[RMDB]
RNA sequence: GGGAACGACUCGAGUAGAGUCGAAAACUUUCUAUGGUUAUGUUGCCCUAGCAGUAAGCAGGAUAGAGCAGACUUCAUAACAGACCACCAAUGUGCAGAUCCUUGUCCGCCCCUUAUCAAUAACAUAAUGUGGGGCAACUUCUAUCAUCUGUCUGUAAUAAAUGAGCUCAUUCGUGAGCUCAUUUAUAAAAGAAACAACAACAACAAC
Reactivity to DMS in 0.01 (KOAc 150mM, MgCl2 10mM, bicine 150mM(pH8.5), 24C), signal-to-noise 2, nucleotides 027 to 156: c100u000u000u000c080u000a090u000g000g000u000u000a050u000g020u010u000g000c010c060c040u010a140g030c050a130g030u010a100a070g030c060a110g010g010a080u010a080g000a080g010c040a070g000a150c030u000u010c040a090u000a120a080c080a140g000a120c020c030a070c030c040a080a140u000g000u010g000c030a090g010a040u000c040c010u000u000g010u020c060c010g010c010c000c000c030u000u000a120u000c040a080a100u010a090a150c050a130u000a060a060u020g010u000g010g020g030g040c030a020a030c010u000u010c050u000a050u020c030a050u000c020u000g010u010c040u020g040u000a190
Reactivity to 2A3 in 0.01 (KOAc 150mM, MgCl2 10mM, bicine 150mM(pH8.5), 24C), signal-to-noise 2, nucleotides 027 to 156: c050u140u110u000c120u150a160u170g080g000u040u060a060u130g030u000u020g020c010c000c010u030a030g020c020a020g010u130a180a010g030c040a030g010g000a050u080a080g060a010g040c020a030g010a050c010u000u020c040a020u020a120a060c040a070g000a030c060c000a010c010c060a060a070u120g000u000g000c030a030g020a080u020c000c050u070u070g030u080c060c010g030c010c010c000c010u010u050a050u120c010a040a200u140a130a010c030a040u230a120a060u230g000u060g060g010g000g000c000a000a000c020u050u000c020u070a040u040c010a030u000c030u070g120u020c000u070g050u040a040

The data come from the RNA Mapping Database (RMDB), library OK3TST.
Structure probing data (DMS and 2A3) for a 207-nucleotide construct.
The DMS profile rests on 3,359 reads.
2A3 adducts were read by reverse transcription with SuperScript II with manganese.
Values cover nucleotides 27 to 156.